An RNA of 177 nucleotides, treated with 2A3 and DMS and read out base by base. For 2A3, 810 sequencing reads were counted. For 2A3 the reverse transcriptase was SuperScript II with manganese. The RNA was probed in 150 mM KOAc, 10 mM MgCl2 and 150 mM bicine (pH 8.5) at 24 C. It was measured as part of the RMDB library OK1LIB.

[RMDB]
RNA sequence: GGGAACGACUCGAGUAGAGUCGAAAACGGCGCAGCGGGAGUGCAUGACGAACCCGAGGCCUGUGCUGGGAGGGGCACGUGUUGAAGUGAGCGUGGCGUGCCUGUGAGGGCCUGAGAAGAGGGAACAGCUCACUCAGUGGUUCGCCACUGAGUGAGCAAAAGAAACAACAACAACAAC
Reactivity to 2A3 in 0.01 (KOAc 150mM, MgCl2 10mM, bicine 150mM(pH8.5), 24C), signal-to-noise 2, nucleotides 027 to 126: c000g000g000c000g000c030a020g010c000g050g010g010a040g030u120g070c060a160u200g030a060c180g040a070a070c000c000c000g000a020g100g000c020c000u030g000u030g000c020u070g000g000g000a140g080g070g020g000c000a030c000g050u080g020u060u160g040a110a130g010u080g050a060g030c040g010u010g030g000c010g000u010g020c000c000u000g050u070g020a100g000g010g030c000c040u110g090a080g010a160a080g020a060g000g000g020a020a070c010a040
Reactivity to DMS in 0.01 (KOAc 150mM, MgCl2 10mM, bicine 150mM(pH8.5), 24C), signal-to-noise 1, nucleotides 027 to 126: c090g000g010c060g020c040a000g030c130g000g070g000a000g000u000g000c070a250u010g010a080c160g010a060a170c000c000c030g030a200g020g000c070c050u000g020u010g040c040u000g000g000g090a050g000g000g000g000c040a050c030g060u020g040u090u000g000a130a010g010u000g010a040g040c030g000u000g000g000c000g000u000g020c000c020u000g000u010g010a080g000g000g000c170c060u000g000a160g000a050a110g050a100g000g000g000a170a070c170a140